[RMDB]
Source: RMDB library OK1LIB, as collected in RNAgym. Chemical mapping of a 177-nucleotide RNA with 2A3. The 2A3 profile rests on 443 reads.
RNA sequence: GGGAACGACUCGAGUAGAGUCGAAAAUCUCUCCUAAACUCGUCGGAGAAGACAAUUGAGGCACUUCCCGGCAUCAAUUUGCGACACGCGCGGCGGUGUGUACCCCUGGGAGGUAAGGUACCACUACAUAACGACGCCAGUUCGCUGGCGUCGUUAUAAAAGAAACAACAACAACAAC
Reactivity to 2A3 in 0.01 (KOAc 150mM, MgCl2 10mM, bicine 150mM(pH8.5), 24C), signal-to-noise 1, nucleotides 027 to 126: u080c030u050c010u030c110c000u020a030a010a190c120u180c130g020u060c050g050g020a160g050a200a030g000a000c070a030a000u170u110g030a080g000g040c080a020c100u000u000c000c000c000g010g000c000a010u050c110a200a120u000u110u210g000c020g040a050c070a010c130g000c000g000c000g080g020c000g000g000u020g000u000g000u120a020c000c000c020c020u040g020g000g130a050g030g100u090a000a040g000g000u000a000c000c010a050c050u030a050c020
Annotation:
Reactivities are rounded to 0.1 and cut off at 0 and 3.